The record gives the reactivity of an RNA of 207 nucleotides to DMS and 2A3. DMS adducts were read by reverse transcription with MarathonRT.

RNA sequence: GGGAACGACUCGAGUAGAGUCGAAAAAACGAGACAGACGCUUCAAUAUCAUUAGCUGUACAGAACGGCAAGCCUUUUGCGUUUGCACUUGGUCAUGUAACUACUGUGGAAAAUCCAGAUGUAGAAGGUGGAUAUAUUCACACAAUCAGACCAACCAAAUCACUACAUCCUUCGGGAUGUAGUGAUUAAAAGAAACAACAACAACAAC
Reactivity to DMS in 0.01 (KOAc 150mM, MgCl2 10mM, bicine 150mM(pH8.5), 24C), signal-to-noise 2, nucleotides 027 to 156: a030a020c030g040a120g040a080c040a000g020a030c030g010c000u000u010c080a070a030u000a090u020c060a190u000u000a080g040c010u000g050u000a300c110a180g000a100a100c040g020g000c030a080a070g000c060c010u010u000u020u000g050c010g030u000u000u000g000c000a090c070u000u010g020g000u000c010a160u000g000u010a030a090c090u000a030c050u000g010u010g000g000a060a070a110a110u000c020c000a070g000a060u000g050u000a110g010a080a070g070g020u020g010g000a100u020a200u000a150u010u000c040a060c060a100c030a040a050u000c060a050g020a030c030c000a010a120c050c050a080
Reactivity to 2A3 in 0.01 (KOAc 150mM, MgCl2 10mM, bicine 150mM(pH8.5), 24C), signal-to-noise 4, nucleotides 027 to 156: a000a000c080g000a010g060a010c010a010g030a020c000g040c020u110u070c140a110a110u070a090u180c060a130u080u210a020g020c000u000g000u030a070c030a070g110a170a000c010g040g000c000a030a040g030c000c020u080u210u120u180g050c020g020u010u020u020g020c050a070c040u010u050g000g010u030c050a190u060g020u050a070a010c040u080a030c070u100g000u030g040g020a060a070a020a030u000c010c020a030g050a230u110g010u080a070g040a260a030g070g040u010g010g010a000u000a010u010a030u120u060c020a020c030a020c030a070a070u130c020a020g020a020c020c000a020a020c030c010a050